[RMDB]
RNA sequence: GGGAACGACUCGAGUAGAGUCGAAAACACGCAGUUAUGGUAUCGAUUACGUGCAUAACAACUGCCAUUGACUGUUAUACAGUUACCUAGGUUAUGGUGCACGUAUAUACAUAUCAAUGGCAGCGUGGCAGAGCUGUCAAUUCGUUGACAGCUCUGCAAAAGAAACAACAACAACAAC
Reactivity to DMS in 0.01 (KOAc 150mM, MgCl2 10mM, bicine 150mM(pH8.5), 24C), signal-to-noise 1, nucleotides 027 to 126: c000a080c000g020c150a060g080u000u010a010u000g000g000u000a050u030c090g000a220u010u010a020c050g040u000g000c000a000u000a050a090c050a090a290c110u000g000c070c050a110u000u000g000a040c290u000g020u020u010a130u000a170c000a220g030u000u010a010c050c060u000a140g000g020u010u040a040u020g000g060u000g020c030a050c110g000u000a000u000a030u000a030c090a000u000a070u000c020a000a030u000g000g000c000a000g010c010g000u000g000
Reactivity to 2A3 in 0.01 (KOAc 150mM, MgCl2 10mM, bicine 150mM(pH8.5), 24C), signal-to-noise 2, nucleotides 027 to 126: c020a000c000g000c010a050g010u010u030a010u010g060g060u090a030u200c050g020a070u050u290a140c040g030u060g020c010a000u020a040a060c010a020a120c070u040g000c020c010a040u010u000g020a010c000u000g020u030u020a030u030a040c020a020g050u090u020a020c000c020u110a160g210g100u180u080a100u290g020g000u000g000c000a000c070g000u000a000u010a000u010a020c000a000u050a020u050c010a000a070u000g000g060c010a010g000c000g010u000g060
The record gives the reactivity of an RNA of 177 nucleotides to DMS and 2A3. The RNA was probed in 150 mM KOAc, 10 mM MgCl2 and 150 mM bicine (pH 8.5) at 24 C. 2A3 is a SHAPE reagent: it acylates the 2'-hydroxyl of flexible nucleotides of all four kinds. Source: RMDB library OK2TRN, as collected in RNAgym. 2A3 adducts were read by reverse transcription with SuperScript II with manganese.